[RMDB]
Chemical mapping of a 177-nucleotide RNA with DMS and 2A3. 2A3 is a SHAPE reagent: it acylates the 2'-hydroxyl of flexible nucleotides of all four kinds. Reactivities are given for positions 27 through 126. The DMS profile rests on 1,093 reads. For 2A3 the reverse transcriptase was SuperScript II with manganese.
RNA sequence: GGGAACGACUCGAGUAGAGUCGAAAAGAUAAUGUCUUCGGACAUUAUCCACGCCUUAAGGCUUUAAUUAAUUAGCUAAGCCUGCUAAUUAAAAUGGCAUUAACAACUGUCCAUUCGUGGACAGUAACACCGGUAGCUAAUUCGUUAGCUACCGGUGAAAAGAAACAACAACAACAAC
Reactivity to DMS in 0.01 (KOAc 150mM, MgCl2 10mM, bicine 150mM(pH8.5), 24C), signal-to-noise 1, nucleotides 027 to 126: g000a010u000a000a000u000g000u000c000u000u040c190g050g000a030c000a000u000u000a000u000c020c020a130c260g010c010c000u000u000a020a060g010g010c010u010u000u010a120a180u000u000a000a000u000u000a010g010c000u000a040a180g000c210c240u000g020c000u000a000a000u000u010a000a010a080a110u010g000g000c010a050u000u000a010a110c190a090a040c010u000g020u000c020c000a020u000u000c140g000u000g000g000a030c000a030g010u000a070a160
Reactivity to 2A3 in 0.01 (KOAc 150mM, MgCl2 10mM, bicine 150mM(pH8.5), 24C), signal-to-noise 2, nucleotides 027 to 126: g000a010u000a000a000u000g000u000c010u030u050c230g060g020a000c000a000u010u000a000u000c000c000a060c030g060c010c010u040u070a140a040g050g010c000u080u040u050a100a040u040u000a000a010u000u000a010g000c030u060a090a140g140c030c120u040g000c020u030a010a010u040u010a000a010a030a080u100g040g000c020a030u080u050a090a060c080a070a000c010u010g000u010c000c000a020u050u050c240g110u010g000g000a000c000a000g010u010a010a000